Chemical mapping of a 207-nucleotide RNA with 2A3.

[RMDB]
RNA sequence: GGGAACGACUCGAGUAGAGUCGAAAAAGAUCCACGCUACGGCGUGGAUCACACGUUCAUCCCUAUUGGGACGGAAGUAGGCAUAGUGCCGAAGGAACGCAUUAGUCAUGCGCUACGGCGCCUGACACACAUCAGAGUCACUUCGGUGACUCUGAAAGGUUCUAAAAGCGUUCGCGCUUUUAGAACCAAAAGAAACAACAACAACAAC
Reactivity to 2A3 in 0.01 (KOAc 150mM, MgCl2 10mM, bicine 150mM(pH8.5), 24C), signal-to-noise 2, nucleotides 027 to 156: a000g000a000u010c000c000a030c010g060c000u010a040c230g080g000c020g000u000g000g000a000u010c000a000c000a020c020g000u010u010c010a040u040c010c020c000u160a300u120u300g000g010g010a010c010g030g000a030a000g010u030a010g010g000c040a090u180a160g140u110g250c000c000g000a000a020g040g030a000a000c000g000c030a140u000u150a010g020u010c000a000u070g000c000g000c030u050a020c180g140g010c000g000c060c040u000g000a000c000a000c010a010c010a080u000c010a000g000a000g000u000c000a000c000u040u040c170g120g000u010g000a000c000u000c000u000g000a000a000a000